[RMDB]
RNA sequence: GGGAACGACUCGAGUAGAGUCGAAAAGUUAAAAUUAAAUGGCGAUUGUCGGUUUGGUCGCUUUUUACCAGGGUUCCGAUCAAGCGAAGUGACUAGACCGAACACUCGUGCUAUAAUUUUAGAAUAAAUAAGACAGUUAUUUCGAUAACUGUCUUAUAAAAGAAACAACAACAACAAC
Reactivity to DMS in 0.01 (KOAc 150mM, MgCl2 10mM, bicine 150mM(pH8.5), 24C), signal-to-noise 4, nucleotides 027 to 126: g000u040u000a000a010a000a010u000u000a010a060a160u050g000g000c000g010a000u010u000g010u000c010g000g000u000u000u000g000g010u010c000g010c010u000u000u010u010u050a100c210c090a100g010g000g010u020u010c120c070g000a110u020c120a060a130g020c240g000a010a020g020u000g010a010c000u000a000g000a000c000c000g000a060a030c000a010c060u000c000g020u000g020c030u000a300u010a000a000u010u000u000u000a020g000a140a150u040a070a110
Reactivity to 2A3 in 0.01 (KOAc 150mM, MgCl2 10mM, bicine 150mM(pH8.5), 24C), signal-to-noise 5, nucleotides 027 to 126: g040u020u030a010a010a000a020u010u010a020a080a220u160g030g000c000g010a000u010u000g000u000c000g000g000u010u000u010g000g000u000c000g000c000u030u010u010u040u060a130c060c030a070g050g020g010u110u120c050c080g060a120u090c120a050a020g100c020g070a000a000g000u010g010a000c000u000a000g000a000c000c000g010a020a000c000a000c000u000c000g010u030g060c000u020a020u000a090a000u000u000u000u020a010g010a050a110u170a170a120